Conditions: 150 mM KOAc, 10 mM MgCl2 and 150 mM bicine (pH 8.5), 24 C. Chemical mapping of a 207-nucleotide RNA with 2A3. Reactivities are given for positions 27 through 156. It was measured as part of the RMDB library M2RFPK. 2A3 adducts were read by reverse transcription with SuperScript II with manganese. The 2A3 profile rests on 372 reads.
RNA sequence: GGGAACGACUCGAGUAGAGUCGAAAACCUAUCCAAAAUGAGAUCCCAUCUGGCACACUGUGCUAAUUUGAGAUUCUCAUGCCUCCUACUUGGAGAGAUCUGGACUAGAAGUCAGGGCAUCUGACUCAAUACAUUCGUCAGUUCGCUGACGAAUGAAGAGGGAAAAAGGCUUCGGCCUUUUUCCCUCAAAAGAAACAACAACAACAAC
Reactivity to 2A3 in 0.01 (KOAc 150mM, MgCl2 10mM, bicine 150mM(pH8.5), 24C), signal-to-noise 1, nucleotides 027 to 156: c000c000u010a020u060c030c000a180a000a000a000u000g000a000g030a020u000c000c020c000a000u000c000u060g000g000c000a020c040a110c160u300g000u000g010c010u140a130a300u000u020u030g060a040g000a010u300u040c000u000c030a000u040g030c000c000u030c000c000u090a270c130u170u300g000g000a000g000a000g000a040u030c060u170g000g010a010c060u100a100g010a040a000g010u000c000a020g020g070g180c210a100u130c020u000g000a000c000u000c020a020a020u070a170c000a010u000u000c000g000u010c010a000g020u000u030c110g000c140u000g000a000c000g020a000a000u000g000a000a040